[RMDB]
RNA sequence: GGGAACGACUCGAGUAGAGUCGAAAAACACCAAAACUGAAAACGGAAGGCAAUCCUUCCACGACGAUACUUACUUUCCUUUGAUCGUCGUUACUACUGGCAUAACCACAAAGGAGAACAAACAUGAGCGCGGACACUGACUUCGGUCAGUGUCCAACUUGUAGCAGUGCUUCGGCACUGCUACAAGAAAAGAAACAACAACAACAAC
Reactivity to 2A3 in 0.01 (KOAc 150mM, MgCl2 10mM, bicine 150mM(pH8.5), 24C), signal-to-noise 2, nucleotides 027 to 156: a000c050a150c030c020a060a040a050a030c100u150g030a090a080a000a070c090g000g000a020a000g020g000c180a050a180u180c000c000u020u000c000c000a000c030g000a000c020g010a010u040a130c010u110u060a020c020u100u140u070c000c000u020u000u030g030a000u010c000g000u000c000g000u030u040a050c020u010a010c040u020g010g020c020a070u150a110a060c060c000a000c040a100a020a000g020g010a020g010a090a060c020a030a120a000c070a150u230g070a130g110c150g000c080g030g000a000c000a000c000u000g000a000c000u010u060c220g070g010u000c000a000g040u000g000u000c000c000a000a000
Structure probing data (2A3) for a 207-nucleotide construct.
For 2A3 the reverse transcriptase was SuperScript II with manganese.
The reactions ran in a buffer of 150 mM KOAc, 10 mM MgCl2 and 150 mM bicine (pH 8.5), at 24 C.
For 2A3, 892 sequencing reads were counted.